Chemical mapping of a 207-nucleotide RNA with 2A3. For 2A3 the reverse transcriptase was SuperScript II with manganese.

[RMDB]
RNA sequence: GGGAACGACUCGAGUAGAGUCGAAAAGAAACGCAAGGCCGCUGACCGACGGUAUAUUGUGGGGCUUACCACAGGGGACGCGGCGUUAUCACUUGCCUUUUAAGCCGACCGUCUGGGCUGCAUACAAACCACCCAACUAUCUUCGGAUAGUUGGGAAGAUUAUUCGUGCGUUCGCGCACGAAUAAUCAAAAGAAACAACAACAACAAC
Reactivity to 2A3 in 0.01 (KOAc 150mM, MgCl2 10mM, bicine 150mM(pH8.5), 24C), signal-to-noise 1, nucleotides 027 to 156: g020a000a080a000c040g000c020a000a030g090g000c000c010g010c030u030g090a050c020c000g020a040c060g000g060u060a140u060a060u140u220g010u000g010g050g040g190c030u050u050a060c020c000a030c040a050g030g000g000g020a000c020g000c000g000g000c010g000u010u010a070u010c060a010c130u000u060g020c010c000u000u110u070u180a050a050g010c030c050g040a090c000c010g000u070c020u050g000g050g000c020u010g000c000a080u130a140c070a040a030a060c000c070a020c000c040c000a000a000c000u010a000u000c000u040u000c070g080g000a000u000a000g000u000u000g000g010g000a000a000